The record gives the reactivity of an RNA of 207 nucleotides to 2A3. For 2A3 the reverse transcriptase was SuperScript II with manganese.

RNA sequence: GGGAACGACUCGAGUAGAGUCGAAAACAAAAUGUGUUCGCACAUUUUGAAAAAAACCUUUGUGGCAGCCCACUGAUGACCCAAACUUACCCAUUGGGUAAGGUUUGGCAAGGUGGCUGCCACUCUGGUAAAAAAUGGAACCAUUCGUGGUUCCAAACGUAUCGUACGAGUUCGCUCGUACGAUACGAAAAGAAACAACAACAACAAC
Reactivity to 2A3 in 0.01 (KOAc 150mM, MgCl2 10mM, bicine 150mM(pH8.5), 24C), signal-to-noise 2, nucleotides 027 to 156: c000a000a010a000a010u010g000u010g010u060u100c240g070c080a010c010a010u000u010u030u050g080a220a030a020a000a000a000a000c020c000u000u000u000g000u030g020g000c000a020g010c110c220c010a020c000u030g080a280u150g030a090c000c000c000a000a010a010c010u000u000a000c020c000c100a300u220u300g000g000g000u020a000a010g030g050u010u000u000g000g010c000a060a030g010g000u000g010g000c000u000g000c000c000a020c030u010c000u010g000g030u120a080a120a040a000a000a020u100g000g000a000a000c000c000a000u060u090c260g160u070g030g000u000u100c020c020a000a000a000
High 2A3 reactivity points to a flexible backbone, as in loops and unpaired stretches.